Source: RMDB library M2RFPK, as collected in RNAgym.
The record gives the reactivity of an RNA of 207 nucleotides to DMS and 2A3.
For DMS the reverse transcriptase was MarathonRT.
Values are in units of 0.01, from 0 to 300, in steps of 10.
Reactivities are given for positions 27 through 156.

[RMDB]
RNA sequence: GGGAACGACUCGAGUAGAGUCGAAAAACGCGGAGUACGCUCCGCGACAACACUUCUUUCGACCCGCUGACCGAGACCUAUGGGUCGUUAAAUUACGUCUCUAUCUUACUCACAUAACAUCGCACAAAAAACGUGGUUCGGUUCGCCGAACCACGAAUCACAAACUCAAGUUCGCUUGAGUUUGUGAAAAAGAAACAACAACAACAAC
Reactivity to DMS in 0.01 (KOAc 150mM, MgCl2 10mM, bicine 150mM(pH8.5), 24C), signal-to-noise 1, nucleotides 027 to 156: a080c030g060c010g040g010a060g030u000a030c220g000c000u000c000c020g010c000g020a030c050a050a180c090a120c120u010u000c090u000u000u010c020g000a030c000c010c010g060c100u000g020a130c080c070g010a110g020a090c030c040u010a040u010g040g020g030u000c000g030u000u000a000a040a080u000u010a050c040g010u000c040u010c010u020a100u020c040u000u000a110c040u000c040a060c030a100u010a100a090c020a120u010c070g000c030a090c080a030a020a050a070a070a130c000g050u000g020g000u000u000c000g020g020u010u000c300g020c000c000g020a010a030c030c000a000c000g000a010a010
Reactivity to 2A3 in 0.01 (KOAc 150mM, MgCl2 10mM, bicine 150mM(pH8.5), 24C), signal-to-noise 4, nucleotides 027 to 156: a000c000g000c000g010g000a010g010u080a010c130g020c050u000c000c000g010c030g030a010c000a070a010c020a030c060u130u130c040u050u220u120c000g010a000c000c010c020g020c120u080g030a090c030c090g040a020g030a020c000c050u070a140u260g000g010g000u000c000g000u000u020a030a040a010u140u080a050c040g050u000c020u000c000u040a090u090c050u080u120a070c030u060c090a100c020a100u150a150a040c030a130u130c110g020c160a050c100a050a100a030a060a050a030c040g000u000g000g000u010u000c010g000g060u010u040c130g020c030c000g010a000a000c000c000a000c000g000a000a000